Conditions: 150 mM KOAc, 10 mM MgCl2 and 150 mM bicine (pH 8.5), 24 C.
The record gives the reactivity of an RNA of 177 nucleotides to 2A3.
[RMDB]
RNA sequence: GGGAACGACUCGAGUAGAGUCGAAAAUGUCAGCCCACACGCACCGAGAUAAUAAUAGUGCUAAGCGUGUGAGUGCUUGUCCUUGUUCUGUGCUAUCCUAUCCUCUGUGGCUGCUGCUGCCGGCGAACCUAUCCCGUGCCUUCGGGCACGGGAUAGGAAAAGAAACAACAACAACAAC
Reactivity to 2A3 in 0.01 (KOAc 150mM, MgCl2 10mM, bicine 150mM(pH8.5), 24C), signal-to-noise 2, nucleotides 027 to 126: u160g060u040c040a010g030c000c000c000a000c030a000c000g000c010a020c010c000g120a050g060a260u160a140a040u200a050a070u090a060g130u110g140c050u010a130a050g030c070g020u000g000u050g060a140g010u200g000c000u020u070g020u000c000c020u000u070g000u030u000c070u080g100u120g030c000u070a120u220c000c000u100a070u110c050c000u000c050u030g080u090g050g000c000u010g000c000u060g000c010u020g000c010c010g000g040c000g040a000a020
Description: Reactivities are rounded to 0.1 and cut off at 0 and 3.